Structure probing data (2A3 and DMS) for a 177-nucleotide construct. It was measured as part of the RMDB library OK2TRN. For 2A3 the reverse transcriptase was SuperScript II with manganese. The RNA was probed in 150 mM KOAc, 10 mM MgCl2 and 150 mM bicine (pH 8.5) at 24 C.
RNA sequence: GGGAACGACUCGAGUAGAGUCGAAAAGCAUAGGAAUAACGCGUAAGUUGCGCUUGGCAUGCUCUACCGACUUGCGAAUCGCUUCAGAGACAUCAUUCGCCUUACCAAAGCCAUAACCAACGCGACCAUCCUUAGGAACCUUCGGGUUCCUAAGGAUAAAAGAAACAACAACAACAAC
Reactivity to 2A3 in 0.01 (KOAc 150mM, MgCl2 10mM, bicine 150mM(pH8.5), 24C), signal-to-noise 2, nucleotides 027 to 126: g000c010a030u160a130g060g060a220a090u110a200a040c050g040c010g020u040a060a030g070u160u170g010c020g000c050u030u060g010g040c020a020u070g020c020u000c000u030a040c020c010g040a040c050u090u120g010c060g110a090a090u040c030g010c020u080u110c080a030g000a000g020a090c010a030u050c000a010u090u090c030g020c000c010u000u050a040c040c000a050a040a010g030c010c030a060u080a050a050c010c020a050a010c010g010c010g040a040c000c020
Reactivity to DMS in 0.01 (KOAc 150mM, MgCl2 10mM, bicine 150mM(pH8.5), 24C), signal-to-noise 3, nucleotides 027 to 126: g020c040a060u000a120g010g020a080a110u000a060a100c120g010c100g000u000a050a100g010u010u000g050c050g000c100u000u010g010g020c170a070u000g010c050u000c010u000a090c180c060g010a040c070u000u010g010c120g010a050a070u010c050g020c030u010u010c140a050g020a130g000a120c080a080u000c070a070u000u000c060g060c010c030u010u000a060c040c060a050a020a100g030c040c010a060u020a020a050c090c020a010a080c140g020c080g010a140c080c080